[RMDB]
RNA sequence: GGGAACGACUCGAGUAGAGUCGAAAACGCGGACGUGAAGCAGGCCGCCACGUAUGAGCGCGCGCUCACCAAGCCCCUCGCGACGUACGACACCAUCUACAUAGACGAGGCAUUUACGCUUGGGGCGUAACACGUGUGGCUUCGGCCACACGUGUUAAAAAGAAACAACAACAACAAC
Reactivity to 2A3 in 0.01 (KOAc 150mM, MgCl2 10mM, bicine 150mM(pH8.5), 24C), signal-to-noise 3, nucleotides 027 to 126: c060g030c010g020g060a070c060g030u030g030a070a000g110c100a080g110g100c020c010g040c020c000a000c020g110u110a060u230g070a090g040c020g010c000g000c020g010c030u030c010a100c050c000a000a000g000c000c000c000c000u000c000g020c030g000a090c020g030u120a040c080g030a020c030a060c120c000a070u120c000u070a110c070a180u170a050g100a070c060g000a020g050g040c000a020u120u120u050a020c040g000c030u020u010g000g020g000g020c000g020
Reactivity to DMS in 0.01 (KOAc 150mM, MgCl2 10mM, bicine 150mM(pH8.5), 24C), signal-to-noise 2, nucleotides 027 to 126: c030g050c000g010g020a030c050g000u000g000a070a210g030c150a130g000g050c190c060g030c130c060a030c090g000u010a010u070g040a030g000c060g000c090g000c080g000c050u030c090a140c050c050a120a000g010c000c230c000c000u000c030g000c000g040a150c140g000u000a000c060g010a040c050a100c240c170a120u000c040u000a070c100a170u030a070g000a080c050g000a090g000g030c300a140u000u050u060a090c070g000c000u000u000g030g010g000g080c000g050